[RMDB]
RNA sequence: GGGAACGACUCGAGUAGAGUCGAAAAAGGUGAUUUCUCCUGCACCUUUAUCAAUGGAGGAACUCGACUUUGCUGUGGGUCCCAAAGGGACCUUAGGUGCAGACAGUUACGGGCGGUGAAGUGUGAGCAUAGGUUCGUGUCUUCGGACACGAACCAACGAGUAAGUGUUGUUCGCAACACUUACUCGAAAAGAAACAACAACAACAAC
Reactivity to 2A3 in 0.01 (KOAc 150mM, MgCl2 10mM, bicine 150mM(pH8.5), 24C), signal-to-noise 4, nucleotides 027 to 156: a000g000g010u020g000a050u010u050u040c040u010c000c000u120g040c010a020c010c020u090u230u120a160u040c070a050a060u260g010g000a010g020g030a050a050c020u010c030g050a050c050u030u060u070g010c030u040g010u080g040g000g000u030c000c000c020a180a120a060g000g000g010a010c000c000u020u080a020g020g000u030g010c000a010g040a100c020a020g010u050u140a030c040g000g020g000c010g000g040u040g030a050a040g030u050g020u050g080a030g020c060a110u090a150g000g010u000u010c000g000u000g000u000c010u010u060c160g050g000a000c000a000c010g010a000a000c000c000a000a000
Reactivity to DMS in 0.01 (KOAc 150mM, MgCl2 10mM, bicine 150mM(pH8.5), 24C), signal-to-noise 1, nucleotides 027 to 156: a010g000g050u010g000a300u010u010u000c010u020c010c000u000g000c020a040c000c040u000u000u000a070u000c160a170a140u000g000g030a070g010g030a040a060c090u000c020g020a050c000u020u000u000g020c030u000g000u000g000g010g000u000c010c020c030a050a090a130g030g060g010a020c030c000u000u000a000g010g020u020g000c010a090g010a090c090a130g000u000u000a070c010g020g020g040c030g030g000u000g020a030a060g030u000g000u000g020a080g030c090a170u000a130g010g040u000u000c010g030u010g020u000c010u010u010c300g040g030a010c000a000c000g010a020a000c000c000a020a020

Structure probing data (2A3 and DMS) for a 207-nucleotide construct. For 2A3, 3,331 sequencing reads were counted. For DMS, 3,158 sequencing reads were counted. The reactions ran in a buffer of 150 mM KOAc, 10 mM MgCl2 and 150 mM bicine (pH 8.5), at 24 C. DMS adducts were read by reverse transcription with MarathonRT.